[RMDB]
RNA sequence: GGGAACGACUCGAGUAGAGUCGAAAAGCAAGAUGCUUCGGCAUCUUGCAGUCGUAGCGCGAUCGACAGAAUUACAGCUAUGUCGAACGAGGUAGAGCGCGCACAUCAUCCCUUUCGAGGGAUGAAAUCAGCGUUGUCAAUUCGUUGACAACGCUGAAAAAGAAACAACAACAACAAC
Reactivity to 2A3 in 0.01 (KOAc 150mM, MgCl2 10mM, bicine 150mM(pH8.5), 24C), signal-to-noise 1, nucleotides 027 to 126: g000c000a010a000g000a000u020g030c010u060u150c170g120g000c010a000u000c000u000u010g000c000a010g050u040c030g010u020a000g020c000g040c010g010a070u040c000g010a010c010a030g140a070a050u170u150a200c050a070g100c090u130a080u150g000u010c010g030a020a020c040g020a040g070g190u180a060g000a010g030c010g000c000g050c000a020c010a020u030c000a000u010c000c000c000u020u070u060c160g210a020g010g020g010a010u010g000a060a000a020
Reactivity to DMS in 0.01 (KOAc 150mM, MgCl2 10mM, bicine 150mM(pH8.5), 24C), signal-to-noise 1, nucleotides 027 to 126: g000c020a020a000g010a020u000g020c030u000u010c150g070g050c000a010u000c000u010u000g000c000a030g000u020c080g010u000a070g040c020g010c000g000a160u000c000g000a010c000a060g000a070a210u010u010a130c270a120g020c020u020a180u000g000u000c030g000a060a070c070g030a120g020g030u010a060g010a150g000c010g000c000g000c020a150c210a070u000c000a000u000c020c000c000u000u000u020c120g000a030g040g020g000a010u000g000a040a080a090